[RMDB]
RNA sequence: GGGAACGACUCGAGUAGAGUCGAAAACUGAAGCGAGAGCUAACAACAGUAUCAACAGGUUUAAUUUGGAUUUGGAAACGAGAGUUUCUGGUCAUGAAAAACCCCAAAGAAGAAAUCCGGAGGAUCCGAUACUCCAGUUCUUCGGAACUGGAGUAUCAAAAGAAACAACAACAACAAC
Reactivity to DMS in 0.01 (KOAc 150mM, MgCl2 10mM, bicine 150mM(pH8.5), 24C), signal-to-noise 2, nucleotides 027 to 126: c030u000g000a140a050g040c030g000a160g000a170g030c000u000a060a070c090a030a210c040a090g010u000a070u010c030a070a130c070a140g000g010u000u010u000a080a240u000u000u020g010g000a000u030u000u020g020g000a000a000a070c000g000a120g000a140g030u020u000u000c000u000g000g000u000c050a020u050g000a150a090a050a110a030c010c000c000c050a020a020a100g030a050a090g000a030a060a060u000c030c020g000g000a100g000g000a040u000c080c060
Reactivity to 2A3 in 0.01 (KOAc 150mM, MgCl2 10mM, bicine 150mM(pH8.5), 24C), signal-to-noise 4, nucleotides 027 to 126: c010u050g050a060a000g010c040g010a030g030a000g070c030u100a060a020c030a030a020c010a030g040u090a070u150c010a020a100c000a070g030g100u030u030u100a100a150u020u120u070g060g010a020u070u140u270g010g010a010a010a010c010g010a050g010a010g160u000u010u020c010u020g010g030u010c060a060u110g140a050a040a040a030a080c010c000c000c030a040a080a100g050a070a020g050a020a120a020u040c030c010g010g060a040g050g030a010u070c040c070